Structure probing data (DMS and 2A3) for a 177-nucleotide construct. Conditions: 150 mM KOAc, 10 mM MgCl2 and 150 mM bicine (pH 8.5), 24 C. The data come from the RNA Mapping Database (RMDB), library TTRINS.
RNA sequence: GGGAACGACUCGAGUAGAGUCGAAAAGAUAUGGAAUUUAUUGAGCCAUUCACUCGUUGAAACGAUGGCUCUCGGAAACGAGAGCCAUCGUGGAGAGUGAUGGCAAGACCAGUAAAUUCCUAAGUCACACACUAACUAAGUUCGCUUAGUUAGUGUGAAAAGAAACAACAACAACAAC
Reactivity to DMS in 0.01 (KOAc 150mM, MgCl2 10mM, bicine 150mM(pH8.5), 24C), signal-to-noise 1, nucleotides 027 to 126: g010a060u000a300u000g000g010a010a000u000u000u000a000u010u000g000a220g020c000c000a010u020u010c010a010c000u000c010g020u010u010g030a190a180a020c000g000a030u010g000g020c000u000c000u000c000g000g000a090a140a200c000g000a000g010a020g000c000c000a000u000c000g010u010g000g010a040g000a030g010u000g010a020u000g010g020c030a040a030g000a170c300c010a010g020u000a000a020a010u000u000c000c000u000a040a140g000u000c060a300
Reactivity to 2A3 in 0.01 (KOAc 150mM, MgCl2 10mM, bicine 150mM(pH8.5), 24C), signal-to-noise 3, nucleotides 027 to 126: g020a010u070a060u200g000g000a010a020u010u020u000a010u000u050g020a060g020c020c000a090u300u300c010a040c000u000c010g230u300u120g070a060a050a020c000g000a000u000g010g010c000u040c010u000c000g020g010a140a030a040c030g000a000g000a000g000c000c020a000u000c000g000u010g000g000a010g000a000g000u000g010a000u000g000g000c020a000a000g050a080c120c000a000g010u010a000a010a020u010u000c000c000u020a210a030g060u030c010a010